[RMDB]
RNA sequence: GGGAACGACUCGAGUAGAGUCGAAAAUCCGCUUUAUGCGAGGCUUAAUUCCUUUGUUGAGGCCGUAUUUUUGCGAAGUCUGCCCAAAGCACGUAGUGUUUGAAGAUUUCGGUCCUAUGCAAUAUGAACCCAUGAACCAUGUCAGGUCCUGACGGAACUGAUUUCAUGUGUUCGCACAUGAAAUCAGAAAAGAAACAACAACAACAAC
Reactivity to DMS in 0.01 (KOAc 150mM, MgCl2 10mM, bicine 150mM(pH8.5), 24C), signal-to-noise 2, nucleotides 027 to 156: u000c010c050g010c020u010u000u010a030u010g010c020g020a060g020g010c050u000u000a100a150u000u000c020c010u000u000u000g030u010u000g010a150g000g020c010c040g000u010a020u000u000u000u010u000g010c010g020a080a050g000u000c020u000g020c050c050c070a070a050a040g000c040a030c070g020u000a150g040u000g010u010u000u000g010a090a090g000a080u000u000u000c000g050g000u000c030c020u000a110u000g010c070a100a080u000a170u000g010a040a050c030c030c030a090u000g000a030a120c070c030a130u000g010u000c040a040g000g010u000c020c030u000g000a160c110g000g010a080a180
Reactivity to 2A3 in 0.01 (KOAc 150mM, MgCl2 10mM, bicine 150mM(pH8.5), 24C), signal-to-noise 2, nucleotides 027 to 156: u010c010c010g010c020u040u170u150a100u180g090c070g040a050g020g020c010u040u080a060a030u080u120c000c000u070u090u150g060u020u080g080a040g010g000c000c010g040u040a200u030u110u010u060u060g030c020g030a040a000g030u000c020u050g060c080c010c000a060a040a020g070c050a020c070g240u220a090g020u030g050u100u050u070g020a050a010g000a010u020u070u080c040g020g020u010c000c000u040a030u060g040c020a090a000u050a070u240g060a020a120c030c040c030a040u060g080a020a020c000c020a050u090g010u060c040a020g010g100u070c030c050u030g020a000c060g010g030a030a020